Structure probing data (2A3) for a 207-nucleotide construct. Values cover nucleotides 27 to 156. Values are in units of 0.01, from 0 to 300, in steps of 10.
[RMDB]
RNA sequence: GGGAACGACUCGAGUAGAGUCGAAAAAUCUUUAAGCAGAUGGCAGGUUCACCCCGUAGGGUGCGGAAGUUCGCGCUUCCGUGAAACGCGAAAAUCGGACGGUGGCUGCAAGUCGCAUCGCAAAACCUAUAGCUUGUUAGGUUCGCCUAACAAGCAAGUGUAACAUCGUGUUCGCACGAUGUUACACAAAAGAAACAACAACAACAAC
Reactivity to 2A3 in 0.01 (KOAc 150mM, MgCl2 10mM, bicine 150mM(pH8.5), 24C), signal-to-noise 1, nucleotides 027 to 156: a000u030c010u000u120u050a080a000g010c000a030g020a060u000g020g000c040a000g030g000u170u200c020a010c000c000c000c010g040u050a070g000g130g040u020g000c030g000g020a020a000g010u190u300c040g050c030g020c030u000u010c000c000g010u020g100a110a060a040c100g010c010g140a080a010a000a120u060c010g000g030a080c100g010g000u040g020g000c010u000g000c000a000a010g100u140c060g000c080a000u060c030g010c030a060a060a040a050c020c010u100a100u140a190g000c020u000u000g030u020u000a000g020g040u030u030c050g150c000c000u000a000a000c000a010a000g000c000a000a000